[RMDB]
RNA sequence: GGGAACGACUCGAGUAGAGUCGAAAAGAUAUGGAUAAUGGUAGGGAGCCUCUACAUCGGAAACGAUGUAGUAGGCAUCGAUCUACACAUUAUCCUAAGUCAAAAUCGAAGCCUUCGGGCUUCGAAACGACUAUUAACAGUUCGCUGUUAAUAGUCGAAAAGAAACAACAACAACAAC
Reactivity to 2A3 in 0.01 (KOAc 150mM, MgCl2 10mM, bicine 150mM(pH8.5), 24C), signal-to-noise 3, nucleotides 027 to 126: g020a010u040a010u110g000g000a000u000a010a000u030g040g000u000a010g030g030g110a110g010c010c000u000c000u000a010c000a010u010c010g010g000a040a020a010c000g010a000u000g000u010a000g010u050a000g000g000c010a010u120c010g010a080u000c000u000a000c300a010c000a040u000u010a000u000c000c000u000a040a000g010u000c020a020a010a030a300u060c010g000a000a000g010c010c000u080u120c300g110g000g000c000u010u010c000g000a000a000a000
Reactivity to DMS in 0.01 (KOAc 150mM, MgCl2 10mM, bicine 150mM(pH8.5), 24C), signal-to-noise 5, nucleotides 027 to 126: g000a030u000a290u010g000g000a010u000a000a020u000g000g010u000a010g010g010g020a090g020c000c000u000c000u000a000c010a010u000c000g010g000a080a060a110c000g020a010u000g010u000a000g020u010a010g020g030c010a060u010c200g000a060u000c000u000a010c010a110c030a010u000u000a000u000c000c000u010a010a100g010u000c030a120a070a150a140u010c010g000a010a010g020c010c000u000u020c230g030g010g010c000u000u000c000g000a010a050a140
Notes:
An RNA of 177 nucleotides, treated with 2A3 and DMS and read out base by base. 2A3 adducts were read by reverse transcription with SuperScript II with manganese. DMS adducts were read by reverse transcription with MarathonRT. For 2A3, 17,531 sequencing reads were counted. Reactivities are given for positions 27 through 126.